Record summary: This 177-nucleotide RNA was probed chemically with 2A3 and DMS. DMS adducts were read by reverse transcription with MarathonRT. Values cover nucleotides 27 to 126. Source: RMDB library M2PK90, as collected in RNAgym. The 2A3 profile rests on 1,431 reads.
[RMDB]
RNA sequence: GGGAACGACUCGAGUAGAGUCGAAAAAUAAAGUAGUCUCCUGCAGCGUCUGAGGUUUGCGUUGCAGUCCUCGGAACCAGGACCUCGGCGUGGCCUAGCGAGUUAUGGCGACGAAGGCCGUGAAAAAGUAUUGUACACACUUCGGUGUGUACAAUACAAAAGAAACAACAACAACAAC
Reactivity to 2A3 in 0.01 (KOAc 150mM, MgCl2 10mM, bicine 150mM(pH8.5), 24C), signal-to-noise 1, nucleotides 027 to 126: a000u220a010a090a000g100u100a020g020u000c010u030c030c040u020g060c040a080g000c010g060u000c020u050g020a020g060g000u070u080u030g080c150g090u120u230g010c010a020g020u010c010c000u050c000g000g020a050a070c030c020a020g020g000a000c000c010u010c010g050g030c020g010u020g030g000c020c010u000a040g060c020g030a000g030u110u080a110u190g120g000c000g020a080c020g020a100a010g050g000c040c000g000u050g070a050a100a020a000a050
Reactivity to DMS in 0.01 (KOAc 150mM, MgCl2 10mM, bicine 150mM(pH8.5), 24C), signal-to-noise 2, nucleotides 027 to 126: a110u010a040a060a080g000u010a080g010u010c070u000c020c010u000g030c130a140g000c130g010u000c010u000g020a030g010g000u000u010u010g010c050g020u000u010g000c010a050g000u000c020c000u000c040g000g020a050a050c050c040a060g000g010a020c190c010u000c020g010g020c070g020u000g000g000c010c020u000a140g000c030g000a100g010u020u000a080u020g010g010c010g000a090c080g010a160a110g000g000c020c010g000u000g010a040a060a080a040a050